The data come from the RNA Mapping Database (RMDB), library OK3TST. The record gives the reactivity of an RNA of 207 nucleotides to 2A3. 2A3 adducts were read by reverse transcription with SuperScript II with manganese. Reactivities are given for positions 27 through 156. Values are in units of 0.01, from 0 to 300, in steps of 10.

[RMDB]
RNA sequence: GGGAACGACUCGAGUAGAGUCGAAAAAUCGAAUCUAUCAAUUGGUGCCGGUUCAAAAGCGACAGGCGAAAGAAUAUGUAUGCUGUUGACUUGUUUGGCGUCACAGUCUGUUAGCGCACAGCACUAGCAUGCUCACGUCAUCUUCACUGGCACACCAGGCAACGCAGUGAUUCGUCACUGCGUUGCCAAAAGAAACAACAACAACAAC
Reactivity to 2A3 in 0.01 (KOAc 150mM, MgCl2 10mM, bicine 150mM(pH8.5), 24C), signal-to-noise 1, nucleotides 027 to 156: a000u200c140g040a010a030u040c000u130a120u080c090a170a180u150u120g000g000u000g030c000c000g000g100u050u080c130a140a140a090a000g060c030g000a070c090a010g000g100c000g030a070a110a000g170a110a110u300a180u210g060u110a050u050g030c010u000g000u050u050g070a250c030u110u000g000u110u010u300g000g000c050g020u090c040a080c000a000g110u010c000u010g010u010u000a030g000c010g010c200a180c180a300g000c000a000c000u000a010g030c010a000u000g000c000u040c000a010c000g000u050c000a000u030c030u000u050c050a010c000u000g080g000c000a000c000a030c000c000a010